[RMDB]
The record gives the reactivity of an RNA of 207 nucleotides to 2A3. It was measured as part of the RMDB library M2RFPK. For 2A3, 1,717 sequencing reads were counted. For 2A3 the reverse transcriptase was SuperScript II with manganese.

RNA sequence: GGGAACGACUCGAGUAGAGUCGAAAAUACCGCAGGCCUGCGGUGCGGCAGUGUGGAGACCUGCCGUAAGCCGUGUUGUUCUGACAACCGGGAGAAAGCGUAUGCGGAGGCAGCGCUUUCAGGGUCUAAAAGUAUGGGAUCUUCGGAUCCCAUACAACGGGAAUACAAACUUCGGUUUGUAUUCCCGAAAAGAAACAACAACAACAAC
Reactivity to 2A3 in 0.01 (KOAc 150mM, MgCl2 10mM, bicine 150mM(pH8.5), 24C), signal-to-noise 2, nucleotides 027 to 156: u080a010c000c000g030c000a020g000g000c010c010u040g010c010g010g010u000g000c010g000g000c000a010g000u060g010u120g290g060a030g040a100c010c000u000g000c000c000g000u010a010a010g020c000c030g060u090g010u150u010g010u080u190c080u260g080a020c000a020a000c000c010g000g000g000a000g020a000a000a000g000c010g000u040a300u160g030c030g030g090a050g300g000c010a000g010c000g010c010u000u000u000c010a010g000g000g000u000c010u020a040a070a080a040g010u000a000u010g000g000g050a000u000c010u010u040c150g070g000a000u000c020c000c000a000u000a000c000a010a010